[RMDB]
RNA sequence: GGGAACGACUCGAGUAGAGUCGAAAAUUUUGUCUAUCGUGGUAAGGGGCGCGAGGCGGUACGUUUAUUGCCGAUAGAGAGUCGAUCGAAGCACGCUAGUGAUAGUUAUUACAGUCAUGUUAUGCUAUGGAGGUACGGAAUUCGUUCCGUACCUCCAAAAAGAAACAACAACAACAAC
Reactivity to DMS in 0.01 (KOAc 150mM, MgCl2 10mM, bicine 150mM(pH8.5), 24C), signal-to-noise 2, nucleotides 027 to 126: u000u000u010u010g000u000c030u010a080u000c050g060u030g010g000u010a050a150g010g010g010g020c020g020c060g020a130g000g000c040g000g000u000a020c160g010u000u000u010a060u010u000g010c050c040g000a130u000a090g000a110g000a080g020u010c030g000a070u000c040g030a070a110g000c030a040c090g010c040u010a040g000u000g000a050u000a070g000u000u010a090u010u010a040c040a100g050u010c150a070u000g000u020u000a040u010g000c060u000a100
An RNA of 177 nucleotides, treated with DMS and read out base by base. The data come from the RNA Mapping Database (RMDB), library OK2TST. The RNA was probed in 150 mM KOAc, 10 mM MgCl2 and 150 mM bicine (pH 8.5) at 24 C. The DMS profile rests on 1,404 reads. For DMS the reverse transcriptase was MarathonRT.